[RMDB]
RNA sequence: GGGAACGACUCGAGUAGAGUCGAAAAAAAGUAGAAUUUGCAGUUUUCCAAACACUCCAUGCUGUUUGCCAUCCCUGGGCCUUUGUGCCGGGCCAUCUGAUCCAAAGGCCUGUUUUUAGCUCGUGUGCCUGGAGGGGAGGGGUGAUGCUUGGCCCUGAUUCGUACAUCAAUUCGUUGAUGUACGAAUAAAAGAAACAACAACAACAAC
Reactivity to DMS in 0.01 (KOAc 150mM, MgCl2 10mM, bicine 150mM(pH8.5), 24C), signal-to-noise 1, nucleotides 027 to 156: a090a050a040g000u000a080g000a060a040u000u000u000g020c050a140g010u000u000u000u010c040c050a090a110a100c060a090c030u030c060c040a120u000g040c010u000g000u000u010u000g040c030c020a110u010c020c010c000u010g030g020g000c010c030u000u030u010g000u010g010c010c020g000g020g010c050c080a050u000c060u000g000a100u000c090c030a000a090a050g010g010c010c010u040g020u000u000u020u020u020a100g030c000u000c070g020u010g010u000g010c030c030u000g030g010a170g000g010g010g000a130g010g000g050g050u000g010a110u000g000c010u000u000g000g000c000c010c020u000g010
Reactivity to 2A3 in 0.01 (KOAc 150mM, MgCl2 10mM, bicine 150mM(pH8.5), 24C), signal-to-noise 2, nucleotides 027 to 156: a000a000a000g090u120a070g090a200a210u220u130u220g020c100a050g030u050u110u110u070c080c000a080a110a020c030a010c030u110c080c010a020u060g030c040u030g040u170u080u090g030c040c020a060u010c020c010c000u000g030g000g000c010c010u010u050u080g060u040g000c020c040g000g010g000c040c000a100u090c060u050g070a080u060c050c050a030a030a020g010g000c000c000u020g060u010u150u000u060u100a030g010c000u000c060g060u030g020u050g050c040c030u020g060g030a050g020g010g010g010a040g000g020g000g000u040g020a040u070g010c040u040u070g020g020c030c030c010u010g030